[RMDB]
RNA sequence: GGGAACGACUCGAGUAGAGUCGAAAAGAUAUGGAGGCUUCUUGGACCGAUCGUGUCGGAAACGACACAAUCGCUAGAAGCUCCUAAGUCAAAGGGAAUGAGCGGUGUUCGCACCGCUCAUUCCCAACCAUCCUAUCGAGUUCGCUCGAUAGGAUGGAAAAGAAACAACAACAACAAC
Reactivity to DMS in 0.01 (KOAc 150mM, MgCl2 10mM, bicine 150mM(pH8.5), 24C), signal-to-noise 1, nucleotides 027 to 126: g020a040u000a170u010g000g010a010g000g010c000u000u000c010u000u020g020g000a180c300c000g010a000u000c030g010u000g000u000c010g000g000a050a090a240c000g010a000c000a020c000a030a000u000c000g000c020u010a020g010a050a000g000c010u000c000c010u000a040a120g010u000c040a090a080a150g010g000g020a060a000u020g000a000g010c000g000g030u000g010u000u000c170g000c000a010c020c000g020c000u000c000a000u000u000c000c000c030a000a010